Description:
This 177-nucleotide RNA was probed chemically with 2A3 and DMS. Reactivities are given for positions 27 through 126.
RNA sequence: GGGAACGACUCGAGUAGAGUCGAAAAGACGGAAAAGAUCGAACCUAAGAAGAUCAGGCAGUGUGAGCCGAAUCCUAGGGCUCCUAGGGACGCAUCGUCCGAUGCGAAAUAAACACUAACGUCGAAACGUAGUACCGUAGUUCGCUACGGUACUACGAAAAGAAACAACAACAACAAC
Reactivity to 2A3 in 0.01 (KOAc 150mM, MgCl2 10mM, bicine 150mM(pH8.5), 24C), signal-to-noise 4, nucleotides 027 to 126: g030a010c010g020g030a050a110a000a050g030a010u030c030g020a080a140c010c030u080a110a070g070a060a010g010a080u040c020a030g080g000c010a030g030u020g000u040g130a020g030c030c030g040a050a030u060c010c000u010a010g040g040g100c070u090c020c020u040a000g020g000g030a010c000g000c030a020u020c020g210u050c090c170g000a000u020g000c000g010a020a060a060u170a000a110a000c030a010c060u080a160a000c030g010u030c020g030a030a060a010
Reactivity to DMS in 0.01 (KOAc 150mM, MgCl2 10mM, bicine 150mM(pH8.5), 24C), signal-to-noise 4, nucleotides 027 to 126: g000a000c030g010g020a070a040a070a120g000a040u000c010g000a140a130c120c140u030a130a070g010a140a130g000a020u010c050a070g020g000c120a130g020u000g000u000g000a080g010c030c050g010a100a070u040c020c010u000a050g010g000g030c050u060c040c070u000a020g010g000g020a300c020g010c020a000u010c000g010u020c250c170g000a010u010g000c000g000a040a090a060u000a090a090a040c030a020c070u010a070a130c040g030u010c010g010a090a060a100